[RMDB]
RNA sequence: GGGAACGACUCGAGUAGAGUCGAAAACCCGUUUUGUUCGCAAAACGGGACUCAUCUUUGCUUGCCAGCAUAGCAGGUGUUGGCUGGACUGCUGGCUUAUCCUUGGAGGCAGUUUCGACUGCCUCAACAAUUCGCUAUCCUUCGGGAUAGCGAAUUGAAAAGAAACAACAACAACAAC
Reactivity to DMS in 0.01 (KOAc 150mM, MgCl2 10mM, bicine 150mM(pH8.5), 24C), signal-to-noise 3, nucleotides 027 to 126: c000c000c010g010u010u010u010u000g000u000u000c180g030c010a000a000a000a000c010g000g000g000a120c070u000c060a100u000c090u010u000u010g020c090u000u000g010c000c000a010g000c010a020u000a100g000c070a120g020g010u000g010u010u000g010g000c010u000g000g000a230c180u000g000c000u000g000g010c050u000u000a070u010c040c080u000u010g010g010a020g000g000c000a010g010u000u010u020c140g010a020c000u000g000c010c000u000c010a010a070
Reactivity to 2A3 in 0.01 (KOAc 150mM, MgCl2 10mM, bicine 150mM(pH8.5), 24C), signal-to-noise 2, nucleotides 027 to 126: c000c000c020g020u000u000u000u000g010u010u040c210g000c090a000a000a020a000c000g000g000g040a070c010u010c040a120u010c040u040u150u120g110c050u100u090g030c010c000a000g030c010a050u080a140g110c040a050g010g140u130g100u300u160g140g060c000u020g000g060a020c000u020g010c010u000g000g000c000u010u080a060u030c010c000u000u130g170g000a000g020g000c000a000g010u000u050u110c110g050a030c000u000g070c000c000u000c000a000a010
This 177-nucleotide RNA was probed chemically with DMS and 2A3. Values are in units of 0.01, from 0 to 300, in steps of 10. High 2A3 reactivity points to a flexible backbone, as in loops and unpaired stretches. For DMS, 3,211 sequencing reads were counted. Conditions: 150 mM KOAc, 10 mM MgCl2 and 150 mM bicine (pH 8.5), 24 C. For 2A3 the reverse transcriptase was SuperScript II with manganese.